[RMDB]
Notes:
Chemical mapping of a 207-nucleotide RNA with 2A3. Conditions: 150 mM KOAc, 10 mM MgCl2 and 150 mM bicine (pH 8.5), 24 C. Reactivities are given for positions 27 through 156.
RNA sequence: GGGAACGACUCGAGUAGAGUCGAAAAGAGACGCAGCUGGAGAGGACACAGGCACUCAGGGCAUUCGGCUCCAGGCUUGAAUCCUGGUUCCUCCAUUCUCUCCUGGGGAGGCACCUUGACCUCUCUUGAGCCCCAGUUUCCACCUCUGUAAAAUGAGGGAUGCCUUUAUGUUCGCAUAAAGGCAUCCAAAAGAAACAACAACAACAAC
Reactivity to 2A3 in 0.01 (KOAc 150mM, MgCl2 10mM, bicine 150mM(pH8.5), 24C), signal-to-noise 1, nucleotides 027 to 156: g050a010g020a040c120g000c080a080g000c090u030g050g000a020g000a030g010g010a000c020a030c050a060g000g000c000a000c040u250c010a010g000g010g000c090a050u060u040c050g010g020c000u020c080c090a130g050g000c050u220u300g090a090a080u110c000c000u000g010g070u050u080c010c020u000c020c060a100u190u030c040u030c020u000c010c000u050g010g010g000g010a050g050g050c040a110c050c000u070u080g110a170c000c010u020c010u000c000u000u020g000a010g000c000c000c020c000a000g030u000u020u000c010c010a060c010c000u020c020u020g080u110a020a150a120a060u160g000a040g070